Annotation
This 177-nucleotide RNA was probed chemically with 2A3 and DMS. For DMS the reverse transcriptase was MarathonRT. Reactivities are given for positions 27 through 126. Source: RMDB libraries RFM100 and RFMREP, as collected in RNAgym.

RNA sequence: GGGAACGACUCGAGUAGAGUCGAAAAAGAGCUCAUACGUGAGCUCAAAUACAUACUUGCCCUCACUUAGACCAGAGGUCGAUGAUGAGAGCUUUGUUCUGAGCCAGAGCACGGAUACGUCCGUGCACAGCAACGUCCAAUUCGUUGGACGUUGCUGAAAAGAAACAACAACAACAAC
Reactivity to 2A3 in 0.01 (KOAc 150mM, MgCl2 10mM, bicine 150mM(pH8.5), 24C), signal-to-noise 4, nucleotides 027 to 126: a000g020a010g000c000u000c010a020u030a100c260g100u060g010a010g010c000u000c010a000a000a000u030a000c010a030u150a050c050u070u060g070c000c010c000u000c000a060c010u040u070a000g010a030c010c040a090g050a080g280g090u020c040g070a120u120g030a060u090g040a040g010a010g080c000u020u020u020g080u000u020c030u050g030a020g020c010c010a060g030a000g070c000a000c010g010g010a010u010a040c230g040u000c010c000g000u000g000c020a010
Reactivity to DMS in 0.01 (KOAc 150mM, MgCl2 10mM, bicine 150mM(pH8.5), 24C), signal-to-noise 2, nucleotides 027 to 126: a140g000a010g000c000u000c000a040u000a070c220g020u000g000a010g000c000u010c000a010a070a090u010a120c140a050u030a060c140u000u000g000c040c010c000u000c090a070c040u000u000a070g030a000c010c020a080g020a210g000g000u000c030g000a070u000g040a120u000g010a090g000a100g000c020u000u000u000g000u000u010c090u000g000a060g010c090c060a160g000a100g000c000a000c000g000g000a020u010a040c230g010u000c000c000g000u000g030c000a020